[RMDB]
RNA sequence: GGGAACGACUCGAGUAGAGUCGAAAAGAUAUGGACCUAGAACUACUGCUCUGACAGCGAAGAACUCGGAAACGAGGGAGCUGGAUGAGCAGCUAGGUCCUAAGUCAAAUCUCCCUUCGGGGAGAAACGUCUUUAUGUUGUUCGCAACAUAAAGACGAAAAGAAACAACAACAACAAC
Reactivity to 2A3 in 0.01 (KOAc 150mM, MgCl2 10mM, bicine 150mM(pH8.5), 24C), signal-to-noise 2, nucleotides 027 to 126: g050a010u030a050u210g000g000a000c000c010u010a020g000a080a080c170u300a050c010u300g030c010u000c030u090g100a030c000a000g090c030g260a300a040g020a080a050c000u000c030g020g010a080a050a020c020g010a010g030g000g010a000g000c000u000g000g030a040u070g000a000g000c000a000g000c000u000a000g000g000u000c000c000u010a010a000g000u000c000a030a050a100u000c000u000c010c010c000u000u050c300g080g000g020g000a000g000a020a030a010
Reactivity to DMS in 0.01 (KOAc 150mM, MgCl2 10mM, bicine 150mM(pH8.5), 24C), signal-to-noise 2, nucleotides 027 to 126: g000a020u000a300u000g000g000a000c010c000u000a000g000a050a030c070u010a300c020u000g000c000u000c010u000g000a300c050a020g030c000g010a120a170g010a160a180c000u000c010g000g010a070a080a130c010g040a020g000g010g000a080g000c010u000g000g000a120u000g000a010g030c000a030g000c000u000a010g010g010u000c010c000u010a010a040g040u000c050a060a100a080u000c000u010c000c000c020u000u020c060g030g020g020g000a010g010a000a110a140
The record gives the reactivity of an RNA of 177 nucleotides to 2A3 and DMS. The RNA was probed in 150 mM KOAc, 10 mM MgCl2 and 150 mM bicine (pH 8.5) at 24 C. The data come from the RNA Mapping Database (RMDB), library TTRDEL. 2A3 adducts were read by reverse transcription with SuperScript II with manganese.